Source information
Source: RMDB library M2PK50, as collected in RNAgym. Chemical mapping of a 177-nucleotide RNA with 2A3 and DMS. For DMS, 6,297 sequencing reads were counted. DMS (dimethyl sulfate) methylates the pairing face of unpaired adenines and cytosines. For 2A3, 5,738 sequencing reads were counted.
[RMDB]
RNA sequence: GGGAACGACUCGAGUAGAGUCGAAAAUACCGCGUCUUCGGACGCGGUAAGAUCCCGUGGGAAAACCUGAGAGACGGAGAUGAAGAGACUCAAGCUACGCAAUGACUGCCGGAUUCGUCCGGCAGAACGGUGAAUUAGUAUUCGUACUAAUUCACCGAAAAGAAACAACAACAACAAC
Reactivity to 2A3 in 0.01 (KOAc 150mM, MgCl2 10mM, bicine 150mM(pH8.5), 24C), signal-to-noise 4, nucleotides 027 to 126: u030a000c010c000g010c010g020u000c010u050u040c210g090g000a010c010g000c040g000g000u000a010a000g000a030u010c010c010c020g010u130g000g040g000a070a190a090a120c020c020u070g030a060g000a000g010a080c050g030g010a050g000a050u110g060a060a060g030a010g040a050c010u020c060a070a010g010c030u100a030c070g010c060a070a160u170g050a110c000u000g000c010c010g000g000a020u040u020c160g040u040c020c000g000g000c000a000g000a000a000
Reactivity to DMS in 0.01 (KOAc 150mM, MgCl2 10mM, bicine 150mM(pH8.5), 24C), signal-to-noise 5, nucleotides 027 to 126: u000a010c000c000g030c000g010u000c000u000u020c190g040g020a020c000g040c000g000g010u000a000a040g010a100u000c000c000c000g030u010g000g000g000a100a050a100a070c030c050u000g010a100g000a080g010a090c100g000g000a040g010a070u000g010a060a080g000a100g010a060c070u000c030a040a090g010c030u000a050c090g010c100a100a060u010g010a190c010u000g000c000c000g000g000a030u000u010c170g000u000c000c000g000g000c000a000g000a020a070